[RMDB]
RNA sequence: GGGAACGACUCGAGUAGAGUCGAAAAGAGGGCCUUCCUUCUUCUGUGGUCCCGCCUCUCCUGGUCGGUGAACCCCCUGGCUUUGGAUUUCCUCCCAGGUGUAGAAUCAAUCUCCAUGUCCUCUCGCUAAGAUGACAGUUCGCUGUCAUCAAAAGAAACAACAACAACAAC
Reactivity to 2A3 in 0.01 (KOAc 150mM, MgCl2 10mM, bicine 150mM(pH8.5), 24C), signal-to-noise 9, nucleotides 027 to 129: g090a040g010g010g010c020c010u080u060c060c000u050u100c030u090u030c050u080g150u090g050g030u040c020c000c000g020c000c010u050c000u000c000c020u020g020g010u050c040g020g020u080g080a080a070c000c000c000c000c010u010g020g000c000u120u060u060g040g020a090u050u070u080c000c010u040c000c010c010a020g030g000u050g030u070a050g060a070a050u090c030a030a060u020c030u000c040c020a040u060g050u030c000c000u020c010u010c020g020c060u050a090a020
Reactivity to DMS in 0.01 (KOAc 150mM, MgCl2 10mM, bicine 150mM(pH8.5), 24C), signal-to-noise 9, nucleotides 027 to 129: g020a090g000g000g010c070c050u000u030c040c020u000u040c040u020u020c040u000g060u040g010g010u000c040c020c030g000c040c000u030c060u010c020c020u010g030g020u030c030g020g010u040g040a110a110c050c000c020c010c020u020g000g010c090u020u030u000g020g030a140u030u010u020c020c030u000c030c000c010a040g030g020u020g020u010a050g040a100a090u020c100a100a090u030c020u000c020c040a070u040g030u020c010c020u020c040u040c080g000c090u000a060a120
This 170-nucleotide RNA was probed chemically with 2A3 and DMS. For DMS the reverse transcriptase was MarathonRT. The data come from the RNA Mapping Database (RMDB), library 15KLIB. 2A3 is a SHAPE reagent: it acylates the 2'-hydroxyl of flexible nucleotides of all four kinds. The reactions ran in a buffer of 150 mM KOAc, 10 mM MgCl2 and 150 mM bicine (pH 8.5), at 24 C. The DMS profile rests on 101,414 reads.